[RMDB]
RNA sequence: GGGAACGACUCGAGUAGAGUCGAAAAAGGUUCGCUGUGGUGCAACUCUUAUCAGUAACUAAUCCAAAGCAAGUAUAGGAGAACAGGUUUUUAACUAUUUUUAGGCAGAUAAAAAAUAGUAUUUGACAAAAUCGAUUGUCGUUCGCGACAAUCGAAAGUACUUGGAUGAGUUCGCUCAUCCAAGUACAAAAGAAACAACAACAACAAC
Reactivity to 2A3 in 0.01 (KOAc 150mM, MgCl2 10mM, bicine 150mM(pH8.5), 24C), signal-to-noise 2, nucleotides 027 to 156: a000g020g030u040u060c030g010c010u010g010u020g040g030u030g000c020a040a060c040u000c030u040u100a070u100c040a050g040u060a040a130c060u030a120a070u010c040c040a090a020a050g030c010a050a030g030u070a100u060a120g000g020a040g030a050a070c080a070g040g000u000u000u030u030u060a030a010c000u000a000u010u030u020u040u060a080g020g020c030a000g020a210u190a040a080a000a000a000a000u000a000g010u030a090u120u090u140g040a060c000a020a140a000a060u010c000g000a000u000u000g000u000c030g000u010u090c220g010c000g080a000c000a000a000u000c000g000a000a000a000
Structure probing data (2A3) for a 207-nucleotide construct. Values cover nucleotides 27 to 156. High 2A3 reactivity points to a flexible backbone, as in loops and unpaired stretches. For 2A3 the reverse transcriptase was SuperScript II with manganese.